[RMDB]
RNA sequence: GGGAACGACUCGAGUAGAGUCGAAAAUUCAACACGGGGAUUGGGCAGCACAUUUUGAAAAAUCCUCUCAUUAUUAACAGCAUUAUCGAUAAGGCUGCCUUAAGACCAACUGAUGUAGUGCUGGAAAAGUCAUUACUCAGUUCGCUGAGUAAUGACUAAAAGAAACAACAACAACAAC
Reactivity to DMS in 0.01 (KOAc 150mM, MgCl2 10mM, bicine 150mM(pH8.5), 24C), signal-to-noise 2, nucleotides 027 to 126: u000u000c040a040a160c120a110c260g000g010g010g010a100u000u010g000g000g020c000a010g030c000a130c080a200u000u000u010u030g000a010a060a080a050a030u000c060c050u000c050u030c120a050u000u020a080u010u000a110a110c020a020g010c020a020u010u000a060u000c070g000a110u010a050a080g010g000c000u000g000c030c020u000u010a050a090g010a130c070c050a040a060c140u010g000a090u000g000u000a020g000u000g000c000u000g000g000a030a100a120
Reactivity to 2A3 in 0.01 (KOAc 150mM, MgCl2 10mM, bicine 150mM(pH8.5), 24C), signal-to-noise 2, nucleotides 027 to 126: u050u010c030a050a000c050a090c180g020g020g010g020a020u000u120g010g040g000c000a000g060c000a020c010a130u130u190u120u220g080a060a090a010a040a010u010c030c000u030c040u010c080a050u020u300a060u090u180a110a090c010a010g010c010a000u020u000a020u150c050g070a070u040a160a000g080g010c000u000g000c020c010u020u070a060a020g000a010c010c030a060a050c090u090g030a040u140g020u020a050g000u010g020c010u000g000g040a010a050a050